[RMDB]
RNA sequence: GGGAACGACUCGAGUAGAGUCGAAAAACGUCUCAACCCGGAAGGAAAGAGGUAGGAUUAAAACCUCAACACAACCAUCAGAAUAAUCAUGAUUUCAACUUAUCUCCGCUUGCCGAAGGUGCUACCAUGAACGAUUACGAUUCGUCGUAAUCGUUCAAAAAGAAACAACAACAACAAC
Reactivity to 2A3 in 0.01 (KOAc 150mM, MgCl2 10mM, bicine 150mM(pH8.5), 24C), signal-to-noise 2, nucleotides 027 to 126: a020c020g050u010c010u000c030a050a190c000c000c000g040g050a050a040g040g070a150a020a000g020a000g000g010u080a050g080g050a040u140u250a020a000a080a100c000c050u070c020a050a030c020a040c030a070a110c030c010a020u060c040a010g080a160a070u180a120a020u140c040a030u080g050a090u020u000u140c060a080a110c060u070u040a000u070c070u040c000c030g020c050u030u040g030c000c000g070a100a030g080g020u100g010c040u070a050c000c050a040
Reactivity to DMS in 0.01 (KOAc 150mM, MgCl2 10mM, bicine 150mM(pH8.5), 24C), signal-to-noise 2, nucleotides 027 to 126: a070c120g000u000c000u000c030a110a120c050c000c040g020g030a110a100g000g020a070a090a130g000a050g000g060u000a060g000g020a180u000u000a090a060a050a070c010c010u000c030a090a120c150a060c120a020a120c050c030a080u000c070a030g000a050a080u000a060a080u000c080a030u050g000a120u000u000u000c090a090a070c050u010u000a020u000c020u000c010c100g000c050u000u000g030c040c020g000a020a030g010g000u010g000c070u020a070c050c080a230